Overview: Conditions: 150 mM KOAc, 10 mM MgCl2 and 150 mM bicine (pH 8.5), 24 C. An RNA of 177 nucleotides, treated with DMS and 2A3 and read out base by base. The DMS profile rests on 1,265 reads. It was measured as part of the RMDB library OK1LIB.
RNA sequence: GGGAACGACUCGAGUAGAGUCGAAAAGAGCAAAUGGGUGUAGUUAUGAAUGGGUUCAUGGUAUGGUGUAUUGAUAAUGGCACAUCUCCAGAUGUCAAUGGAAUAUGGGUGAUGAUGGAUGGUGAAGCCGGCAGCAGCUAUUCGUAGCUGCUGCCGGAAAAGAAACAACAACAACAAC
Reactivity to DMS in 0.01 (KOAc 150mM, MgCl2 10mM, bicine 150mM(pH8.5), 24C), signal-to-noise 1, nucleotides 027 to 126: g070a110g040c070a000a020a020u000g000g020g020u000g020u000a120g000u000u000a100u020g000a090a040u000g040g020g000u000u000c030a080u000g000g030u000a000u000g070g000u000g040u000a120u010u110g020a130u020a040a170u010g060g020c090a140c090a020u000c190u000c100c050a000g020a050u040g000u010c050a010a020u070g020g000a090a030u020a050u010g020g010g010u000g000a060u000g090a070u000g000g020a070u040g000g000u000g000a150a110g000
Reactivity to 2A3 in 0.01 (KOAc 150mM, MgCl2 10mM, bicine 150mM(pH8.5), 24C), signal-to-noise 1, nucleotides 027 to 126: g060a000g000c000a050a050a050u090g000g050g050u120g000u060a270g030u280u060a000u200g140a210a040u040g030g040g040u070u050c120a060u110g000g100u080a110u030g000g050u060g000u010a000u000u070g040a060u080a170a090u120g000g110c010a000c000a010u000c100u000c050c000a040g000a170u300g060u040c050a010a030u000g100g040a030a050u060a050u120g010g000g000u000g000a010u010g000a000u070g030g030a030u080g000g020u170g000a060a000g000
For DMS the reverse transcriptase was MarathonRT.